The record gives the reactivity of an RNA of 207 nucleotides to 2A3 and DMS. The RNA was probed in 150 mM KOAc, 10 mM MgCl2 and 150 mM bicine (pH 8.5) at 24 C.
[RMDB]
RNA sequence: GGGAACGACUCGAGUAGAGUCGAAAAGCAUAUGUGCGGAAGCAUAUGUGCGACCAUAUGCGAAAGCGUGUGGGAGGUAAGUACGUCGAAUCGCGGGACGUACCGUAGCACGAGUAGGGGCAAACGCCGCUAAGCGUGCGACGAAGGGGCGCGGACGACUUACAUAUAUGUUCGCGUAUAUGUGAGUAAAAGAAACAACAACAACAAC
Reactivity to 2A3 in 0.01 (KOAc 150mM, MgCl2 10mM, bicine 150mM(pH8.5), 24C), signal-to-noise 6, nucleotides 027 to 156: g000c000a000u020a000u010g020u020g010c030g130g100a090a020g000c000a000u010a000u010g010u010g000c000g000a010c000c000a020u020a010u040g010c020g060a100a030a030g010c020g010u010g010u020g000g050g010a110g020g090u130a070a020g000u010a010c010g010u000c010g030a120a100u080c020g000c000g000g010g000a010c000g000u000a000c000c010g010u020a010g000c010a000c000g000a010g020u010a000g040g050g010g000c040a260a210a120c210g000c000c030g080c230u010a010a000g030c000g000u000g000c000g000a000c000g010a040a030g020g030g000g030c000g000c000g000g000a020c040g010
Reactivity to DMS in 0.01 (KOAc 150mM, MgCl2 10mM, bicine 150mM(pH8.5), 24C), signal-to-noise 5, nucleotides 027 to 156: g010c000a010u000a010u000g040u000g020c000g030g070a240a300g010c000a020u000a010u000g020u000g000c030g010a090c010c010a040u000a020u000g010c020g010a150a100a200g020c010g050u000g020u000g010g000g000a130g010g010u000a050a090g010u000a010c000g010u000c010g000a070a100u000c080g010c030g020g010g000a040c010g030u000a010c010c010g030u000a060g010c010a020c010g010a050g000u010a030g000g030g020g020c020a110a110a190c290g020c000c000g010c000u000a020a040g010c020g010u000g010c000g000a020c020g010a140a140g010g060g000g020c030g000c020g010g020a100c050g010